[RMDB]
RNA sequence: GGGAACGACUCGAGUAGAGUCGAAAAUGGCUGCCACACCCACGAUGUAGAGGCCGAUGACAACCACAAUGAGCCAACGCACUGAGGCAAAAAGUUGAUGCGCAGUUACCUUGCCGUGGUCGUGAUCGCUAUGUACAUCCUUCGGGAUGUACAUAGCAAAAGAAACAACAACAACAAC
Reactivity to 2A3 in 0.01 (KOAc 150mM, MgCl2 10mM, bicine 150mM(pH8.5), 24C), signal-to-noise 4, nucleotides 027 to 126: u050g040g000c020u040g010c020c020a030c020a030c010c020c010a030c020g080a070u100g020u110a070g050a070g120g000c040c020g000a040u050g020a010c030a070a020c030c020a010c020a080a130u090g000a040g030c020c020a050a010c030g010c010a030c050u070g030a050g030g020c000a020a020a020a040a050g110u110u080g060a090u070g010c040g030c020a020g020u060u050a060c010c010u010u050g010c020c050g040u030g010g000u000c020g010u030g050a060u060c040
Reactivity to DMS in 0.01 (KOAc 150mM, MgCl2 10mM, bicine 150mM(pH8.5), 24C), signal-to-noise 4, nucleotides 027 to 126: u010g010g010c020u010g000c040c030a090c090a100c050c020c030a110c160g000a070u010g030u010a100g010a230g010g020c030c030g000a080u000g000a070c070a060a060c060c040a050c110a100a070u010g000a090g010c030c030a050a090c080g020c090a050c050u010g000a110g010g010c060a030a040a040a090a070g000u000u010g010a080u000g010c070g000c030a030g020u010u010a060c090c030u000u000g000c030c040g020u000g000g000u000c030g010u000g010a060u020c150